[RMDB]
RNA sequence: GGGAACGACUCGAGUAGAGUCGAAAACGAAUGUGAUUCGUCACAUUCGAAAAAGCGUACUACAUCCCGCCCUGUUCAGGCGAUGAAAUCCCAAAUAGGAUGGAGCCUGACAGUAACAAGGAUGUAUCGCAAAAACUUCGAAGUUCGCUUCGAAGAACCUUCUUUAAGGAUUCGUCCUUAAAGAAGGAAAAGAAACAACAACAACAAC
Reactivity to DMS in 0.01 (KOAc 150mM, MgCl2 10mM, bicine 150mM(pH8.5), 24C), signal-to-noise 3, nucleotides 027 to 156: c010g010a020a010u010g030u000g000a040u020u020c300g000u020c000a020c000a020u000u030c010g020a010a050a060a090a200g000c020g040u000a100c080u000a030c000a000u010c010c000c030g000c300c150c000u030g020u000u010c010a020g030g060c010g000a140u010g000a060a130a130u000c000c000c010a060a160a200u000a050g000g010a030u010g020g000a270g000c000c000u010g000a030c030a030g010u010a090a080c070a140a060g000g000a060u000g010u000a020u000c030g000c000a080a040a070a100a110c000u000u000c000g000a040a020g020u000u020c300g030c010u000u000c010g010a020a010g000a080a040
Reactivity to 2A3 in 0.01 (KOAc 150mM, MgCl2 10mM, bicine 150mM(pH8.5), 24C), signal-to-noise 8, nucleotides 027 to 156: c010g000a010a000u000g000u010g020a040u050u090c210g060u020c130a000c000a000u000u000c010g070a060a000a000a010a000g030c030g030u090a090c060u000a010c020a000u000c000c010c000g020c030c020c000u050g030u150u110c000a000g000g010c010g080a140u050g020a030a030a000u020c040c030c050a190a300a110u300a110g000g000a000u010g000g010a000g000c000c000u000g010a000c000a000g020u060a130a110c070a090a010g010g000a000u010g000u010a020u300c010g000c010a020a030a000a030a050c000u000u000c000g000a000a000g010u050u120c190g110c140u000u000c000g000a000a000g010a010a010
Conditions: 150 mM KOAc, 10 mM MgCl2 and 150 mM bicine (pH 8.5), 24 C. The record gives the reactivity of an RNA of 207 nucleotides to DMS and 2A3. Values cover nucleotides 27 to 156. For DMS, 7,216 sequencing reads were counted. It was measured as part of the RMDB library RNAMAK. The 2A3 profile rests on 10,430 reads. 2A3 adducts were read by reverse transcription with SuperScript II with manganese.